[RMDB]
RNA sequence: GGGAACGACUCGAGUAGAGUCGAAAAAGCUGGUAGUACUACGGUACUACCAGCAUAAUUCGUGGUUCGAAAACCUCCCACGCAAAAAAACUAAGGAAAAACGCCGAGUAGUACACUACUCGGCGAAGGUACCGGAAUCAGUUCGCUGAUUCCGGAACAUUUGUAAUUAGUUCGCUAAUUACAAAUGAAAAGAAACAACAACAACAAC
Reactivity to 2A3 in 0.01 (KOAc 150mM, MgCl2 10mM, bicine 150mM(pH8.5), 24C), signal-to-noise 1, nucleotides 027 to 156: a020g000c020u000g000g010u000a000g000u000a010c020u020a050c140g040g000u000a000c000u000a000c030c000a000g060c000a010u000a010a050u060u070c000g000u020g000g050u120u110c120g080a070a130a200a250c010c030u030c000c010c010a030c030g060c090a050a090a060a090a050a060a100c120u230a080a130g070g040a060a130a030a000a050c000g010c010c000g000a000g000u010a010g000u080a040c140a020c180u020a000c000u000c000g000g000c000g010a000a000g010g000u020a050c000c000g000g000a010a000u000c010a000g050u040u120c210g020c090u000g000a000u000u000c000c000g000g000a000a000